An RNA of 177 nucleotides, treated with DMS and 2A3 and read out base by base. 2A3 adducts were read by reverse transcription with SuperScript II with manganese. Conditions: 150 mM KOAc, 10 mM MgCl2 and 150 mM bicine (pH 8.5), 24 C.
RNA sequence: GGGAACGACUCGAGUAGAGUCGAAAAGCAAAGAAAUUUUAUCCCAAUAAGGCGAAGCGUGCAAGUCGAAUAAUGCUAAUGCUGCUAGCGAGCACGCGAGCCCUAGCAGACUCCUAGCGAGAAAAAAGUAUAGGUCACGUUUCGACGUGACCUAUACAAAAGAAACAACAACAACAAC
Reactivity to DMS in 0.01 (KOAc 150mM, MgCl2 10mM, bicine 150mM(pH8.5), 24C), signal-to-noise 1, nucleotides 027 to 126: g000c150a020a020a060g020a090a040a140u000u000u020u000a090u000c000c000c020a080a120u030a070a070g000g000c050g000a060a220g020c000g000u020g000c030a070a150g040u000c090g030a020a110u000a120a060u000g000c000u000a000a070u020g010c120u000g050c040u000a010g050c010g030a200g000c000a000c010g000c000g020a300g000c000c000c030u000a070g000c100a100g020a270c020u000c010c030u030a060g030c030g050a080g030a000a020a000a050a030a200
Reactivity to 2A3 in 0.01 (KOAc 150mM, MgCl2 10mM, bicine 150mM(pH8.5), 24C), signal-to-noise 1, nucleotides 027 to 126: g040c070a020a070a020g160a010a280a040u180u200u100u080a110u130c000c000c010a000a090u130a030a000g010g010c020g050a090a010g030c010g000u020g000c060a010a010g120u080c010g070a050a100u270a140a080u260g030c040u020a150a000u150g030c020u020g000c000u010a000g020c000g050a020g000c000a000c020g030c000g000a010g000c000c010c020u000a010g000c000a030g060a020c020u030c000c000u050a080g000c060g080a010g000a010a020a020a000a020a050